Source information
Structure probing data (2A3 and DMS) for a 177-nucleotide construct. The DMS profile rests on 1,273 reads. For 2A3 the reverse transcriptase was SuperScript II with manganese. It was measured as part of the RMDB library OK1LIB. For 2A3, 1,953 sequencing reads were counted. The RNA was probed in 150 mM KOAc, 10 mM MgCl2 and 150 mM bicine (pH 8.5) at 24 C. For DMS the reverse transcriptase was MarathonRT.
RNA sequence: GGGAACGACUCGAGUAGAGUCGAAAAGGUCACCUUCGCCGUCCGCCUGCCGCCGUACACCCCCGGCGACAUUAUCGACCUGAAAGACGACGACGAAGGACCAGUACUCGUCCGCAGCGCCCACGGCGAGGACCAUGCUGUUCGCAGCAUGGUCCUCAAAAGAAACAACAACAACAAC
Reactivity to 2A3 in 0.01 (KOAc 150mM, MgCl2 10mM, bicine 150mM(pH8.5), 24C), signal-to-noise 3, nucleotides 027 to 126: g050g020u110c040a120c040c000u010u040c000g020c010c020g010u090c030c010g010c020c000u040g000c020c000g000c000c000g070u070a040c160a260c040c020c000c000c010g000g000c000g010a010c000a010u190u240a150u130c050g120a200c010c040u080g010a020a060a000g070a010c110g020a010c030g010a000c000g010a030a020g010g000a070c000c000a000g020u030a040c030u030c060g080u070c020c060g030c040a010g030c010g030c000c000c000a030c010g030g000c020
Reactivity to DMS in 0.01 (KOAc 150mM, MgCl2 10mM, bicine 150mM(pH8.5), 24C), signal-to-noise 1, nucleotides 027 to 126: g010g000u010c030a170c010c000u000u000c070g030c000c060g020u000c060c050g020c000c000u000g000c000c030g000c030c000g000u030a060c250a070c080c020c000c050c010g000g000c030g040a050c030a060u030u000a050u010c050g000a070c040c090u000g000a060a070a230g010a180c100g020a000c100g000a060c010g020a050a030g000g000a050c030c020a230g020u000a060c000u000c020g010u000c000c030g000c070a050g000c000g070c000c000c000a110c100g010g000c130